[RMDB]
Conditions: 150 mM KOAc, 10 mM MgCl2 and 150 mM bicine (pH 8.5), 24 C. The record gives the reactivity of an RNA of 170 nucleotides to 2A3 and DMS. For DMS the reverse transcriptase was MarathonRT. For 2A3 the reverse transcriptase was SuperScript II with manganese. For DMS, 31,323 sequencing reads were counted.
RNA sequence: GGGAACGACUCGAGUAGAGUCGAAAAAAUUGCUAACAUGUUCUUGGAACAGACUCAGCAUUCCCUUAACUUUGUGGGAGAGUUCGUUGUCAACGAUGUUGUCCUCGCAAUUCUCUCUGGAACCACACUCGUUGGGAGUUCGCUCCCAACAAAAGAAACAACAACAACAAC
Reactivity to 2A3 in 0.01 (KOAc 150mM, MgCl2 10mM, bicine 150mM(pH8.5), 24C), signal-to-noise 9, nucleotides 027 to 129: a000a010u130u100g000c000u020a030a010c030a110u020g010u010u020c020u140u180g140g010a020a010c010a010g030a060c050u030c150a000g000c010a000u020u000c000c000c000u020u020a090a100c040u040u100u150g090u110g010g010g010a020g000a010g000u010u040c040g010u040u040g100u090c000a010a010c060g180a150u290g000u030u000g030u040c010c030u020c020g030c060a020a070u120u020c000u000c000u000c050u040g130g030a040a020c020c010a030c010a010c040u080c080
Reactivity to DMS in 0.01 (KOAc 150mM, MgCl2 10mM, bicine 150mM(pH8.5), 24C), signal-to-noise 4, nucleotides 027 to 129: a000a010u070u030g020c000u000a060a080c230a140u000g040u000u000c020u050u040g020g010a050a020c000a000g010a010c240u040c210a070g040c020a060u010u020c000c000c010u000u020a050a040c180u000u000u000g050u000g000g000g000a080g030a020g020u040u000c040g040u010u000g000u030c020a050a020c030g020a100u070g030u020u030g000u000c000c000u020c040g000c110a040a050u000u000c040u020c020u000c030u000g000g040a100a130c050c060a070c090a090c120u050c120